[RMDB]
The record gives the reactivity of an RNA of 177 nucleotides to DMS and 2A3.
RNA sequence: GGGAACGACUCGAGUAGAGUCGAAAACUGCACCGGAGGCAGCGGCUGGGGAUGCUGGAGCAUACGGCUCCAGCCACUCAGGAUCCCACUCUGGGCCGUGAAAGUUACUCCACAGAACACCCCAAGGACUAACUCAUCAUUUCGAUGAUGAGUUAGUAAAAGAAACAACAACAACAAC
Reactivity to DMS in 0.01 (KOAc 150mM, MgCl2 10mM, bicine 150mM(pH8.5), 24C), signal-to-noise 5, nucleotides 027 to 126: c020u000g010c070a120c110c090g020g010a030g000g010c070a120g000c070g010g020c010u000g000g000g000g000a130u030g010c010u010g010g000a010g030c010a200u010a130c300g010g020c000u000c000c010a000g010c020c230a090c030u000c010a030g020g000a130u010c000c000c010a130c130u000c110u000g020g000g000c010c040g010u000g000a050a100a100g010u000u000a090c040u020c020c040a110c080a060g000a080a090c100a140c070c000c000c060a100a150g010g010
Reactivity to 2A3 in 0.01 (KOAc 150mM, MgCl2 10mM, bicine 150mM(pH8.5), 24C), signal-to-noise 4, nucleotides 027 to 126: c010u010g010c070a150c060c090g030g000a010g060g030c100a020g010c040g040g000c010u010g000g000g000g020a010u190g010c000u010g010g000a000g000c040a080u180a300c140g230g010c010u000c000c000a000g010c000c000a010c010u030c010a000g060g050a100u060c000c000c010a030c010u100c070u140g000g010g000c010c000g020u020g070a180a100a030g010u040u050a050c010u020c030c020a040c020a030g100a080a030c040a080c030c000c000c020a030a050g100g010

For 2A3 the reverse transcriptase was SuperScript II with manganese. Source: RMDB library OK2TRN, as collected in RNAgym. For DMS the reverse transcriptase was MarathonRT. The reactions ran in a buffer of 150 mM KOAc, 10 mM MgCl2 and 150 mM bicine (pH 8.5), at 24 C. Values are in units of 0.01, from 0 to 300, in steps of 10.